[RMDB]
RNA sequence: GGGAACGACUCGAGUAGAGUCGAAAAGAUAUGGAGUCGCUAGGGAGACGCGUAUAUCGGAAACGAUAUACCGUCGACGAUCUAGGCGACUCCUAAGUCAAAAGGGCCUGUAGUUCGCUACAGGCCCCCCAACUCUAAGGUUCGCCUUAGAGUUGGGAAAAGAAACAACAACAACAAC
Reactivity to DMS in 0.01 (KOAc 150mM, MgCl2 10mM, bicine 150mM(pH8.5), 24C), signal-to-noise 3, nucleotides 027 to 126: g020a030u010a300u010g000g000a000g010u000c010g040c000u000a020g000g010g000a020g040a000c000g010c300g000u010a000u000a000u000c000g010g000a080a070a150c000g010a000u000a000u010a000c000c000g020u010c000g010a050c240g010a020u000c000u000a050g020g010c000g030a000c010u000c000c000u000a010a070g000u000c020a080a090a210a160g020g000g000c000c000u000g020u000a020g020u000u000c300g030c000u000a010c000a020g000g010c000c000c000
Reactivity to 2A3 in 0.01 (KOAc 150mM, MgCl2 10mM, bicine 150mM(pH8.5), 24C), signal-to-noise 1, nucleotides 027 to 126: g030a010u050a050u140g030g000a010g030u000c010g000c020u010a000g000g000g000a030g010a000c020g000c150g020u000a000u010a020u000c000g020g000a070a040a000c000g000a000u000a020u000a000c030c010g000u000c000g000a120c010g000a010u020c000u020a060g200g120c010g000a010c000u000c000c000u000a010a000g000u000c010a010a060a100a180g000g000g010c020c030u010g000u010a030g050u070u130c300g020c210u000a000c000a000g040g050c000c000c000